[RMDB]
RNA sequence: GGGAACGACUCGAGUAGAGUCGAAAAACCAUCGCCAGGGUCAGGCAGGCGUCAGCUCGGUUUCCACCUCUCUACUCCCCAUGGCCAUGCUCGCCCAAAGCGCGAUGGCGCCGGAUUGCGCGGGAGCUACGUUUUUAGACUUCGGUCUAAAAACGUAAAAAGAAACAACAACAACAAC
Reactivity to 2A3 in 0.01 (KOAc 150mM, MgCl2 10mM, bicine 150mM(pH8.5), 24C), signal-to-noise 4, nucleotides 027 to 126: a000c020c000a050u040c030g000c010c000a060g070g030g010u080c070a030g030g060c020a020g030g020c010g030u060c020a020g020c000u030c050g000g000u020u040u010c020c020a050c000c010u020c010u000c010u020a040c030u030c010c010c010c000a080u090g050g000c020c010a050u080g020c020u020c040g030c000c010c000a090a160a030g040c040g000c000g050a030u030g030g010c010g020c010c000g010g040a110u040u100g020c030g000c010g030g020g010a010g000c040
Reactivity to DMS in 0.01 (KOAc 150mM, MgCl2 10mM, bicine 150mM(pH8.5), 24C), signal-to-noise 3, nucleotides 027 to 126: a140c010c010a070u040c090g010c020c040a100g010g000g010u010c120a120g000g050c020a050g000g000c020g010u010c080a100g020c040u000c020g000g010u000u010u000c030c060a060c050c040u000c010u000c020u010a110c090u000c040c000c000c040a100u040g020g000c010c030a090u020g000c050u010c130g000c020c000c040a040a070a130g020c040g000c030g010a050u010g000g000c040g010c010c000g020g000a090u000u010g000c020g010c010g000g000g000a090g010c110

Overview
Structure probing data (2A3 and DMS) for a 177-nucleotide construct. DMS adducts were read by reverse transcription with MarathonRT. Reactivities are given for positions 27 through 126. The RNA was probed in 150 mM KOAc, 10 mM MgCl2 and 150 mM bicine (pH 8.5) at 24 C.